Background:
An RNA of 207 nucleotides, treated with 2A3 and DMS and read out base by base. It was measured as part of the RMDB library OK3TST. High DMS reactivity at an A or C suggests that its Watson-Crick edge is free. Values cover nucleotides 27 to 156. DMS adducts were read by reverse transcription with MarathonRT. The RNA was probed in 150 mM KOAc, 10 mM MgCl2 and 150 mM bicine (pH 8.5) at 24 C.
RNA sequence: GGGAACGACUCGAGUAGAGUCGAAAAUUGUGGACUGUGCUUUGUGCCUGAUAGUAGUUGUCUCCAAACUCUUUGAUUAUGUGUUUCUGACAGUAAAAUAUAUUUGAGCAUGGCCAGGCACGGUGGCUUAUGACUGUAAUCCCAGCAUUUUGGGAGGCAUGAGAAAUGAAUUCGUUCAUUUCUCAUGAAAAGAAACAACAACAACAAC
Reactivity to 2A3 in 0.01 (KOAc 150mM, MgCl2 10mM, bicine 150mM(pH8.5), 24C), signal-to-noise 5, nucleotides 027 to 156: u080u060g030u070g060g030a020c020u010g020u040g070c000u120u220u050g040u140g030c010c010u100g060a140u070a070g120u020a020g020u040u040g020u030c020u000c030c010a050a040a100c020u010c020u080u140u150g120a140u060u260a090u290g070u010g010u000u070u020c060u030g030a040c020a050g060u160a020a050a200a030u220a020u040a090u090u140u190g060a030g030c060a070u060g020g000c000c020a020g000g000c010a000c020g000g010u010g000g020c010u130u120a060u120g050a070c050u020g020u070a010a040u010c000c000c000a010g000c060a130u150u190u130u060g000g010g010a030g000g030
Reactivity to DMS in 0.01 (KOAc 150mM, MgCl2 10mM, bicine 150mM(pH8.5), 24C), signal-to-noise 4, nucleotides 027 to 156: u000u000g030u000g000g000a080c020u000g030u000g020c020u000u000u000g040u000g020c010c010u000g010a180u000a090g030u000a140g020u000u000g000u000c010u000c030c060a070a080a060c020u000c020u000u000u010g020a170u000u000a070u010g020u000g010u000u000u000c050u000g010a060c030a070g020u000a040a060a090a110u000a100u000a110u000u010u000g020a130g030c060a120u000g020g020c020c030a050g010g010c010a020c010g020g020u000g010g010c030u000u010a070u000g010a090c040u000g010u000a030a170u000c010c000c000a070g030c150a210u000u000u000u000g020g030g000a060g010g010